Notes: An RNA of 177 nucleotides, treated with DMS and 2A3 and read out base by base. 2A3 adducts were read by reverse transcription with SuperScript II with manganese. The reactions ran in a buffer of 150 mM KOAc, 10 mM MgCl2 and 150 mM bicine (pH 8.5), at 24 C.

RNA sequence: GGGAACGACUCGAGUAGAGUCGAAAAUGCCUAUUUUGCCCAGGCGGAGCUCGACCGCCCACUGAAGCGAUGAUCGCCUUCAUCGAAGAGCACCGGAUGGACUUCGGGGUCGAGCCGAUCGGCAAGGACUGAGGGCUAGAUUCGUCUAGCCCUCAGUAAAAGAAACAACAACAACAAC
Reactivity to DMS in 0.01 (KOAc 150mM, MgCl2 10mM, bicine 150mM(pH8.5), 24C), signal-to-noise 2, nucleotides 027 to 126: u050g010c010c010u020a090u020u040u000u010g030c000c000c130a020g000g020c000g000g000a140g000c000u010c000g020a000c000c020g020c040c020c020a140c190u010g000a080a010g090c030g020a240u050g000a100u010c190g030c050c040u000u000c010a040u020c040g010a040a020g000a090g010c070a110c010c040g000g000a100u000g010g010a140c050u000u000c000g010g000g000g010u000c000g000a020g000c010c090g000a060u000c300g020g000c010a030a030g010g000
Reactivity to 2A3 in 0.01 (KOAc 150mM, MgCl2 10mM, bicine 150mM(pH8.5), 24C), signal-to-noise 4, nucleotides 027 to 126: u130g040c000c000u030a100u020u140u050u030g010c010c000c030a040g210g130c020g040g050a080g030c000u000c000g000a000c000c000g090c020c040c000a050c010u030g020a040a030g000c040g070a110u120g050a080u150c060g070c040c040u000u000c000a090u030c040g010a020a020g020a020g060c020a030c010c010g130g110a150u230g090g100a290c000u010u010c010g010g000g000g000u000c000g000a000g000c000c010g000a050u040c010g010g010c000a000a000g050g040